[RMDB]
Chemical mapping of a 177-nucleotide RNA with 2A3 and DMS. For 2A3, 2,225 sequencing reads were counted. Values are in units of 0.01, from 0 to 300, in steps of 10. The DMS profile rests on 2,104 reads.
RNA sequence: GGGAACGACUCGAGUAGAGUCGAAAAUGCUCCGCCUGGAUUGCGCUAUAAAGGCUCGUCAUGUCAUACUGCACGACGCCGUCUGUCGCAGCGGGCACCAGGUGGCUCAGCCCUCCAGCGACGGCGGGCAUCGGGCUGGAUUCGUCCAGCCCGAUGCAAAAGAAACAACAACAACAAC
Reactivity to 2A3 in 0.01 (KOAc 150mM, MgCl2 10mM, bicine 150mM(pH8.5), 24C), signal-to-noise 4, nucleotides 027 to 126: u100g030c000u020c000c010g020c000c000u050g040g020a130u110u150g080c050g000c040u080a050u120a230a180a030g080g000c020u000c010g100u080c020a030u110g070u050c000a070u110a220c060u130g030c070a000c050g040a000c070g020c040c000g000u050c030u080g060u080c040g000c020a020g010c050g030g030g000c000a020c000c000a010g120g010u120g030g000c030u030c100a020g010c020c000c000u050c080c100a030g000c010g030a010c010g020g000c000g000g000
Reactivity to DMS in 0.01 (KOAc 150mM, MgCl2 10mM, bicine 150mM(pH8.5), 24C), signal-to-noise 2, nucleotides 027 to 126: u010g000c090u000c000c000g000c000c000u040g030g000a300u010u010g000c020g020c000u020a110u070a020a080a030g020g000c000u000c030g000u000c060a020u000g000u000c120a160u030a210c070u040g000c040a010c060g040a010c120g000c020c020g020u000c020u030g040u010c080g080c060a080g010c290g000g000g020c010a070c040c020a070g000g000u000g000g040c090u000c080a060g000c000c000c000u010c040c000a190g000c110g000a030c000g000g070c030g000g000